Chemical mapping of a 177-nucleotide RNA with DMS and 2A3. The 2A3 profile rests on 5,848 reads. Values cover nucleotides 27 to 126. It was measured as part of the RMDB library M2PK50. 2A3 adducts were read by reverse transcription with SuperScript II with manganese.
RNA sequence: GGGAACGACUCGAGUAGAGUCGAAAAGUACAAUGUUUCGACAUUGUACGAUGGAGCCAAAGCCGUAAGGCAUUUUAAUCCUUGGCUGGCGAAAGCCUAAAAGAAGAAUCCAUUUCGAUGGAUUCAAGAGACGUACUUAUUUCGAUAAGUACGUCUCAAAAGAAACAACAACAACAAC
Reactivity to DMS in 0.01 (KOAc 150mM, MgCl2 10mM, bicine 150mM(pH8.5), 24C), signal-to-noise 4, nucleotides 027 to 126: g000u000a000c010a000a000u010g010u010u000u000c150g020a100c000a000u000u000g010u000a000c010g000a120u010g010g000a280g010c000c010a050a110a120g020c010c000g010u010a040a060g010g020c270a070u000u000u010u010a120a140u000c030c010u000u000g010g010c010u000g010g010c030g000a120a090a090g000c000c000u010a040a040a060a070g000a150a140g000a020a000u000c000c000a020u000u000u020c180g010a010u000g000g000a010u000u000c010a050a090
Reactivity to 2A3 in 0.01 (KOAc 150mM, MgCl2 10mM, bicine 150mM(pH8.5), 24C), signal-to-noise 3, nucleotides 027 to 126: g010u010a000c010a000a000u000g020u000u060u090c110g020a020c000a010u000u000g010u000a000c000g000a020u040g070g050a020g010c010c000a140a070a020g000c020c020g210u220a050a030g010g000c010a000u000u020u010u090a080a070u040c000c000u010u020g000g000c020u010g010g000c020g030a080a020a000g000c010c000u060a080a080a000a010g140a100a010g000a000a000u010c010c000a010u030u070u110c190g060a010u010g000g000a000u000u000c010a010a010